RNA sequence: GGGAACGACUCGAGUAGAGUCGAAAAGAUGCUGGAACGAGCCAGGAACUCGAGGUACCGAAACAAAGGACGCAGGAUCGGUGAGCUUGCGUCGUACUCGCCGUCAAAACAAAGGUACCGAAAGAAAGGGUAUCUGAUUCUUCGGAAUCAGAUACCCAAAAGAAACAACAACAACAAC
Reactivity to DMS in 0.01 (KOAc 150mM, MgCl2 10mM, bicine 150mM(pH8.5), 24C), signal-to-noise 1, nucleotides 027 to 126: g000a040u030g000c040u000g000g000a130a160c060g000a070g000c000c000a160g060g000a020a070c120u010c050g000a210g050g040u010a020c070c030g000a110a040a000c300a050a110a110g000g000a030c000g000c010a040g000g000a050u000c050g010g010u000g050a080g020c000u000u000g120c000g000u000c000g000u000a050c070u000c090g000c220c110g000u000c120a090a040a050a000c130a120a110a050g000g000u000a000c000c000g000a030a000a020g000a300a180a060
Reactivity to 2A3 in 0.01 (KOAc 150mM, MgCl2 10mM, bicine 150mM(pH8.5), 24C), signal-to-noise 2, nucleotides 027 to 126: g070a030u200g040c000u020g000g000a030a120c040g010a090g110c000c010a020g110g020a070a050c100u000c050g070a020g030g030u030a020c000c000g030a160a130a000c110a070a040a060g140g000a000c000g090c000a000g010g020a070u120c080g040g160u120g040a000g070c000u000u000g000c020g000u000c000g000u060a080c050u030c050g040c070c090g080u080c020a010a130a090a030c080a000a080a000g030g000u030a020c000c000g040a100a010a010g080a010a000a070
The record gives the reactivity of an RNA of 177 nucleotides to DMS and 2A3. Source: RMDB library OK1LIB, as collected in RNAgym. The DMS profile rests on 1,145 reads. Conditions: 150 mM KOAc, 10 mM MgCl2 and 150 mM bicine (pH 8.5), 24 C.